[RMDB]
RNA sequence: GGGAACGACUCGAGUAGAGUCGAAAAGUGCCUCGUCGGCCCGGCAUGCCAACCUGAUCCGAAGUUCAAGGUGGUUUCUCUGGCCUUACAGAGAGAUGCGCGUCGGAAGAACCGACGAACAAACCUUAAAACAAAACGACGUUCGCGUCGUUUUGAAGUUAUAAUCUACCUUCGGGUAGAUUAUAACAAAAGAAACAACAACAACAAC
Reactivity to 2A3 in 0.01 (KOAc 150mM, MgCl2 10mM, bicine 150mM(pH8.5), 24C), signal-to-noise 3, nucleotides 027 to 156: g050u030g050c000c010u010c000g000u010c010g000g030c020c010c000g000g000c030a050u110g010c000c020a080a090c020c030u010g020a030u070c030c040g110a080a040g010u060u030c060a080a000g000g000u010g010g000u020u150u010c010u000c000u010g030g030c020c030u040u070a030c010a000g020a000g000a010g010a040u110g040c090g010c010g060u020c010g000g030a090a090g050a160a110c010c000g010a000c010g000a030a000c030a020a050a040c020c020u170u280a050a110a020a070c000a000a000a000a010c040g000a010c000g020u050u090c240g000c000g070u000c010g010u000u000u000u000g000a010a000
Reactivity to DMS in 0.01 (KOAc 150mM, MgCl2 10mM, bicine 150mM(pH8.5), 24C), signal-to-noise 1, nucleotides 027 to 156: g000u020g050c080c040u000c000g020u000c000g060g020c040c000c020g010g030c000a120u020g000c000c080a090a070c050c000u000g020a020u000c060c110g020a140a170g020u000u000c090a070a000g000g020u010g000g020u000u000u010c020u000c010u020g040g030c150c140u010u020a090c020a050g000a020g010a050g010a070u010g020c070g000c030g030u000c010g000g020a080a080g010a160a070c010c000g000a010c020g000a040a070c020a070a120a100c020c040u000u010a080a110a070a230c020a000a030a030a020c000g010a040c020g050u010u010c280g030c030g040u000c000g010u000u000u000u010g000a050a110